[RMDB]
RNA sequence: GGGAACGACUCGAGUAGAGUCGAAAAAUUGGGGCUGUUACUCAACAGACUGAGCAGCUCACUCACAUUCUGUUUUUGUUCCAACUCUGGAACUUUGCUAAGGUAUUGAUUAACCUGCUCCUCAACGUCUCGUAGUACAUUUCGAUGUACUACGAGAAAAAGAAACAACAACAACAAC
Reactivity to DMS in 0.01 (KOAc 150mM, MgCl2 10mM, bicine 150mM(pH8.5), 24C), signal-to-noise 5, nucleotides 027 to 126: a110u020u010g010g010g010g010c050u000g010u000u000a050c090u010c070a050a090c090a090g010a130c150u010g000a050g020c010a040g020c130u000c090a100c130u000c070a070c190a140u000u000c040u000g010u000u000u000u000u000g010u000u000c010c010a040a130c210u000c220u000g000g010a020a010c010u000u000u000g000c050u000a070a040g010g010u010a080u000u010g010a060u000u000a050a030c120c070u000g000c000u000c000c030u000c120a070a110c220g000
Reactivity to 2A3 in 0.01 (KOAc 150mM, MgCl2 10mM, bicine 150mM(pH8.5), 24C), signal-to-noise 3, nucleotides 027 to 126: a000u110u110g020g000g000g000c020u020g010u040u070a070c020u020c050a020a030c010a100g170a160c050u070g020a000g000c000a020g030c030u030c040a060c010u070c000a070c010a120u170u050c060u060g120u040u080u020u090u100g000u020u000c010c010a100a090c130u090c110u240g000g000a030a020c000u050u130u040g030c000u070a100a010g040g020u050a080u070u100g070a040u070u020a030a000c000c030u040g000c000u000c000c010u030c040a070a030c040g060
Structure probing data (DMS and 2A3) for a 177-nucleotide construct. For 2A3, 4,355 sequencing reads were counted. It was measured as part of the RMDB library OK2TRN.